The data come from the RNA Mapping Database (RMDB), library TTRDES. The record gives the reactivity of an RNA of 177 nucleotides to DMS and 2A3.

RNA sequence: GGGAACGACUCGAGUAGAGUCGAAAAGAUAUGGAAUUUAUCAGCUUUUGACGCUCGAGUGUCGGAAACGACAUAACGAGCGAUAAGCUGUGAUUCCUAAGUCAAAAGUUUGCGUUCGCGCAAACAAGAUUGGUCAAUGGUUCGCCAUUGACCAAUCAAAAGAAACAACAACAACAAC
Reactivity to DMS in 0.01 (KOAc 150mM, MgCl2 10mM, bicine 150mM(pH8.5), 24C), signal-to-noise 2, nucleotides 027 to 126: g020a030u000a300u000g010g010a000a000u000u000u020a220u010c020a000g030c000u010u000u010u000g000a290c040g020c000u000c010g000a300g020u000g020u000c020g000g000a040a060a130c000g000a020c000a030u000a140a140c020g020a000g000c000g020a100u000a000a010g040c000u010g010u000g000a040u000u000c000c000u000a070a170g000u000c010a150a090a200a100g000u000u000u000g000c000g020u000u000c250g020c010g020c020a000a000a000c010a080a110
Reactivity to 2A3 in 0.01 (KOAc 150mM, MgCl2 10mM, bicine 150mM(pH8.5), 24C), signal-to-noise 3, nucleotides 027 to 126: g020a020u050a020u160g020g000a030a020u040u130u080a240u300c000a000g020c010u250u200u250u300g300a230c170g000c050u010c010g030a060g030u020g000u030c010g000g020a040a020a050c010g020a010c020a030u080a260a110c030g000a000g000c000g020a020u020a030a000g000c010u000g010u010g010a010u010u000c000c000u030a110a010g040u000c020a010a000a040a260g010u000u010u020g020c030g040u040u060c300g000c010g000c160a020a000a000c010a000a020
The RNA was probed in 150 mM KOAc, 10 mM MgCl2 and 150 mM bicine (pH 8.5) at 24 C.
Reactivities are given for positions 27 through 126.